[RMDB]
RNA sequence: GGGAACGACUCGAGUAGAGUCGAAAAGAUAUGGAGUGUAGUGGGAGUAUGUCGGAAACGACAUCACAUCGAUCACUCACUCCUAAGUCAAAAGGUAUGAAAGAAACUUCGGUUUCUUUCAUACCAACGAAAGGAACUACUUCGGUAGUUCCUUUCGAAAAGAAACAACAACAACAAC
Reactivity to 2A3 in 0.01 (KOAc 150mM, MgCl2 10mM, bicine 150mM(pH8.5), 24C), signal-to-noise 2, nucleotides 027 to 126: g020a010u040a030u100g000g000a030g000u030g010u300a010g000u020g080g040g000a040g020u030a010u010g000u000c020g020g020a060a040a020c010g010a000c010a000u030c060a000c000a300u300c040g080a080u070c010a010c000u000c000a010c000u000c000c000u040a060a030g050u030c050a140a090a020a000g000g000u000a000u000g010a020a020a000g020a000a000a010c020u050u090c290g010g010u000u010u000c000u010u000u000c000a000u000a000c000c000a000a000
Reactivity to DMS in 0.01 (KOAc 150mM, MgCl2 10mM, bicine 150mM(pH8.5), 24C), signal-to-noise 3, nucleotides 027 to 126: g010a030u030a300u000g000g000a020g000u000g000u010a020g050u000g010g010g000a060g020u000a010u000g000u000c000g000g000a080a060a230c010g030a030c000a010u000c200a030c020a280u000c100g010a120u000c000a010c000u000c000a020c010u010c010c000u000a020a040g020u000c040a110a070a130a110g000g000u000a000u000g000a010a010a000g000a010a030a010c000u010u020c160g020g000u000u010u000c000u000u000u000c000a000u000a000c000c000a030a050